This 177-nucleotide RNA was probed chemically with 2A3 and DMS. 2A3 adducts were read by reverse transcription with SuperScript II with manganese. Values cover nucleotides 27 to 126. The RNA was probed in 150 mM KOAc, 10 mM MgCl2 and 150 mM bicine (pH 8.5) at 24 C.
[RMDB]
RNA sequence: GGGAACGACUCGAGUAGAGUCGAAAAAGGAAACUUGAUUACAAAUAAAUAUGCUGUUUUAAUGAAUUUGUGUAAUAGAAGCUAGAUUCCAGUGUCAGCUACUUUCAUGACAUCAUCUACUAUGUAAUCCUGAGUAUAAGUUCGCUUAUACUCAGGAAAAAGAAACAACAACAACAAC
Reactivity to 2A3 in 0.01 (KOAc 150mM, MgCl2 10mM, bicine 150mM(pH8.5), 24C), signal-to-noise 8, nucleotides 027 to 126: a000g130g020a050a060a040c030u060u080g030a010u020u110a030c030a020a130a020u180a060a120a030u160a080u100g030c030u020g090u130u060u090u190a110a080u080g060a020a050u050u100u100g070u020g010u060a040a050u060a190g110a100a000g010c030u070a060g020a110u150u060c070c080a030g040u020g010u090c010a000g020c010u030a040c040u090u090u100c040a070u050g020a020c010a020u020c000a010u000c020u030a070c060u110a100u140g030u040a040a030
Reactivity to DMS in 0.01 (KOAc 150mM, MgCl2 10mM, bicine 150mM(pH8.5), 24C), signal-to-noise 7, nucleotides 027 to 126: a090g020g000a080a050a090c040u000u000g000a110u010u010a040c020a040a070a090u010a060a090a070u020a070u010g010c040u000g000u000u010u020u020a090a070u010g000a080a060u010u010u000g020u010g010u020a050a050u010a070g000a090a060g010c040u010a070g000a090u000u000c070c090a090g010u010g010u000c040a040g000c070u000a070c090u010u000u010c050a040u000g000a030c060a020u010c040a040u000c060u010a060c190u010a060u010g010u010a040a090